[RMDB]
RNA sequence: GGGAACGACUCGAGUAGAGUCGAAAAAACGCUGGGAAGCUGGCUAGGUGGCUAGACCCUGAGUUAGACGGUUUUGUAGUAGCUCUCCAAUAUGAUGCUAUCACAGAUAAUAGGACUACAGACCUAUGCAAUGAACUAAAUGGAAAAAUAAUCAACGGUACUGAUUUACUUUCGAGUAAAUCAGUACAAAAGAAACAACAACAACAAC
Reactivity to DMS in 0.01 (KOAc 150mM, MgCl2 10mM, bicine 150mM(pH8.5), 24C), signal-to-noise 1, nucleotides 027 to 156: a090a030c040g000c060u000g010g000g000a150a150g020c030u000g020g000c050u010a070g010g020u000g030g030c050u000a040g010a050c000c010c000u010g030a100g010u000u000a100g010a130c020g000g020u010u000u010u000g000u000a050g000u020a030g020c010u000c020u000c100c130a080a070u000a090u000g010a090u010g010c020u010a050u010c050a120c080a060g030a110u020a090a110u000a030g010g010a100c040u000a130c060a110g020a150c040c000u000a070u000g000c070a080a070u000g000a040a070c070u010a020a020a130u000g010g010a020a100a040a050a080u010a070a110u000c040a050a110c100g040
Reactivity to 2A3 in 0.01 (KOAc 150mM, MgCl2 10mM, bicine 150mM(pH8.5), 24C), signal-to-noise 2, nucleotides 027 to 156: a000a020c050g000c070u020g000g000g030a080a020g080c030u030g000g000c040u070a050g130g060u050g090g000c010u030a040g010a080c010c010c000u010g050a020g070u030u070a050g010a050c050g000g000u060u080u040u100g000u000a050g000u010a000g050c000u000c000u000c090c000a010a010u070a070u200g070a020u080g030c010u040a010u170c030a030c030a120g030a040u100a070a020u030a150g010g000a020c000u070a020c090a000g000a000c000c000u020a000u060g000c030a040a080u030g010a080a000c030u080a130a060a070u050g050g010a070a020a090a000a020u170a040a090u120c090a030a040c080g050